[RMDB]
RNA sequence: GGGAACGACUCGAGUAGAGUCGAAAAAGCGUAUACGUACGCAGAGUGUUGAGGGCAACCAGUGGGCUAGCCACAUGGGUAUGACGCACCCACCCUCUGCAUUCUUGUAAAUACUUUGGCCAGUCAAUCCGUGAUCUCAUUUCGAUGAGAUCACGGAAAAAGAAACAACAACAACAAC
Reactivity to DMS in 0.01 (KOAc 150mM, MgCl2 10mM, bicine 150mM(pH8.5), 24C), signal-to-noise 2, nucleotides 027 to 126: a090g000c070g050u000a100u050a120c300g060u010a000c000g040c000a080g000a010g000u000g000u000u040g000a020g030g000g080c000a000a300c000c000a000g000u000g000g000g060c300u000a130g000c020c000a020c000a020u040g000g020g000u000a020u000g000a030c040g010c200a120c000c000c000a000c000c020c010u010c000u000g000c000a000u000u000c010u070u120g000u060a200a080a000u000a120c280u030u020u000g020g000c000c010a000g030u010c020a080a260
Reactivity to 2A3 in 0.01 (KOAc 150mM, MgCl2 10mM, bicine 150mM(pH8.5), 24C), signal-to-noise 4, nucleotides 027 to 126: a000g010c000g000u000a040u020a020c300g060u000a000c000g020c020a010g000a010g000u020g000u000u040g010a010g000g000g000c010a000a000c000c000a000g000u000g000g110g110c300u200a090g210c000c000a000c000a000u010g000g000g010u020a010u020g000a000c010g010c010a020c010c000c000a000c000c000c000u000c000u010g020c020a000u010u010c000u030u110g100u090a060a140a130u200a170c110u120u070u000g000g000c000c000a000g000u010c000a000a010

Background:
An RNA of 177 nucleotides, treated with DMS and 2A3 and read out base by base. For DMS, 1,082 sequencing reads were counted. DMS adducts were read by reverse transcription with MarathonRT. The RNA was probed in 150 mM KOAc, 10 mM MgCl2 and 150 mM bicine (pH 8.5) at 24 C. It was measured as part of the RMDB library RFM100. The 2A3 profile rests on 2,194 reads. 2A3 adducts were read by reverse transcription with SuperScript II with manganese.